The record gives the reactivity of an RNA of 207 nucleotides to 2A3.
It was measured as part of the RMDB library M2RFPK.
The RNA was probed in 150 mM KOAc, 10 mM MgCl2 and 150 mM bicine (pH 8.5) at 24 C.
RNA sequence: GGGAACGACUCGAGUAGAGUCGAAAAGCAACUUAGGAUUUUAGGCUCCCCGUGCGUGUCUCGAACCAUGCCGGGCCAAACCCACGGGGGCUGGCGGUCCCCGUGCGGUCAAAAUCAAACCGCUGAAAAAACAGUUCUAGCUUCGGCUAGAACUGAACAAUUCCAAUCACUUCGGUGAUUGGAAUUGAAAAGAAACAACAACAACAAC
Reactivity to 2A3 in 0.01 (KOAc 150mM, MgCl2 10mM, bicine 150mM(pH8.5), 24C), signal-to-noise 3, nucleotides 027 to 156: g010c000a010a110c100u190u180a140g120g060a270u190u110u060u160a110g020g020c040u070c030c020c000c020g060u150g070c040g010u070g020u030c090u050c300g090a040a050c060c000a010u010g000c020c010g000g010g000c020c010a070a040a010c000c010c000a000c020g000g000g000g000g000c000u000g000g000c000g000g000u010c000c000c000c000g000u000g020c080g020g010u040c050a030a060a050a110u130c020a050a100a100c020c000g000c040u030g070a090a100a010a000a000a010c010a000g000u000u000c000u000a000g010c010u040u020c210g080g000c000u000a000g020a000a010c010u000g000a000a000